[RMDB]
RNA sequence: GGGAACGACUCGAGUAGAGUCGAAAAUGUACAGACCACAGAGCAGUCGAAUAGAGCAGUCCUUCUAAGGUUAUCCAAAGAUACCCCCGUAGUGAACUUUCCCUUUAUCGCUUUAAAUCUGUAGUCCCGAAAGUCGCAAUUUCGAUUGCGACUUUCGAAAAGAAACAACAACAACAAC
Reactivity to DMS in 0.01 (KOAc 150mM, MgCl2 10mM, bicine 150mM(pH8.5), 24C), signal-to-noise 1, nucleotides 027 to 126: u050g000u000a000c040a070g010a070c010c010a070c120a070g000a120g010c000a040g070u000c050g050a120a040u010a060g000a020g010c120a040g000u000c110c000u020u060c000u070a050a110g000g000u000u000a010u000c020c070a000a060a110g020a170u020a070c090c030c040c040c100g060u110a050g000u010g010a010a040c120u040u010u000c000c060c010u000u000u000a060u010c100g010c030u000u000u000a030a010a050u050c000u010g010u000a070g000u000c000c020
Reactivity to 2A3 in 0.01 (KOAc 150mM, MgCl2 10mM, bicine 150mM(pH8.5), 24C), signal-to-noise 2, nucleotides 027 to 126: u240g000u030a020c010a010g000a010c050c000a000c030a080g050a030g010c020a010g040u070c020g030a070a050u050a110g060a000g040c000a000g050u040c000c010u050u010c040u100a060a030g020g000u040u060a030u130c030c020a080a000a030g030a040u100a060c030c000c020c000c010g000u060a000g000u010g070a020a010c060u090u020u020c000c000c000u040u050u060a100u050c010g000c000u030u000u080a030a050a010u050c030u000g050u030a010g060u010c020c000